[RMDB]
RNA sequence: GGGAACGACUCGAGUAGAGUCGAAAAGCACAAAGGACCGUGUACUUGCCCGCUCACAUUGGGCGGUUCCGUUGCUGCAAACUUGUUCUGGUAAAAAACUUUGGGAAAAAUCCGUCUGCUAACGAACAACCACCUACUUAUUCGUAAGUAGGUGGUUAAAAGAAACAACAACAACAAC
Reactivity to 2A3 in 0.01 (KOAc 150mM, MgCl2 10mM, bicine 150mM(pH8.5), 24C), signal-to-noise 7, nucleotides 027 to 126: g030c030a020c040a080a090a010g050g010a020c050c050g050u030g040u130a080c050u040u130g050c000c000c020g020c020u060c020a130c020a200u140u220g010g010g000c020g000g000u070u010c010c010g060u080u080g000c030u000g000c030a050a080a080c040u060u050g030u090u020c030u040g050g010u140a030a040a000a030a090a140c080u130u100u110g040g010g020a060a100a030a060a100u020c010c000g050u020c060u050g030c040u050a080a060c050g030a030a020c020
Reactivity to DMS in 0.01 (KOAc 150mM, MgCl2 10mM, bicine 150mM(pH8.5), 24C), signal-to-noise 7, nucleotides 027 to 126: g010c030a070c050a040a090a090g010g000a060c070c040g020u010g010u010a040c040u010u020g010c140c010c010g000c050u010c040a120c190a160u020u030g010g010g000c000g000g000u010u020c020c030g010u000u010g000c040u000g000c070a040a050a070c120u010u000g000u010u010c030u010g010g010u010a000a050a100a080a080a070c080u000u010u000g000g010g010a020a070a050a080a090u020c030c030g000u010c020u000g000c070u010a080a070c110g010a060a080c170
Description
Conditions: 150 mM KOAc, 10 mM MgCl2 and 150 mM bicine (pH 8.5), 24 C. The record gives the reactivity of an RNA of 177 nucleotides to 2A3 and DMS. 2A3 adducts were read by reverse transcription with SuperScript II with manganese. Source: RMDB libraries RFM100 and RFMREP, as collected in RNAgym.